Structure probing data (DMS and 2A3) for a 177-nucleotide construct. For 2A3 the reverse transcriptase was SuperScript II with manganese. It was measured as part of the RMDB library RFMREP. For 2A3, 2,376 sequencing reads were counted.

RNA sequence: GGGAACGACUCGAGUAGAGUCGAAAACCUAGGACUUCGGUCCUAGGAAAGUUUGCCAGAAAUUCGUCGGUAAGCAGAUUUGCAUUGAUUUACGUCAUCACUGAAAAGGCGUUGGUUCGCCAACGCCGAUUGCAGACAGGUUCGCCUGUCUGCAAUCAAAAGAAACAACAACAACAAC
Reactivity to DMS in 0.01 (KOAc 150mM, MgCl2 10mM, bicine 150mM(pH8.5), 24C), signal-to-noise 3, nucleotides 027 to 126: c000c010u010a000g020g010a000c000u000u010c230g020g010u000c000c000u020a000g010g010a030a060a080g000u000u000u000g010c010c000a190g010a040a050a210u020u010c110g010u010c080g010g000u000a070a100g020c020a080g000a190u000u000u000g020c070a140u000u010g010a040u000u010u010a070c150g000u000c080a040u010c090a070c090u000g000a060a060a090a150g000g000c000g010u000u000g000g020u010u020c290g010c010c000a000a010c010g010c000c010
Reactivity to 2A3 in 0.01 (KOAc 150mM, MgCl2 10mM, bicine 150mM(pH8.5), 24C), signal-to-noise 3, nucleotides 027 to 126: c000c000u010a010g000g000a000c020u010u060c250g070g010u000c000c000u020a010g000g000a010a000a010g030u000u010u030g090c040c020a070g130a030a200a100u200u160c100g040u040c030g100g000u020a040a030g000c010a040g090a260u120u180u170g050c070a060u010u100g040a030u110u090u170a080c090g050u040c000a030u040c010a010c040u100g060a060a080a060a060g020g000c000g000u000u000g000g030u040u030c220g010c050c000a000a010c000g000c000c010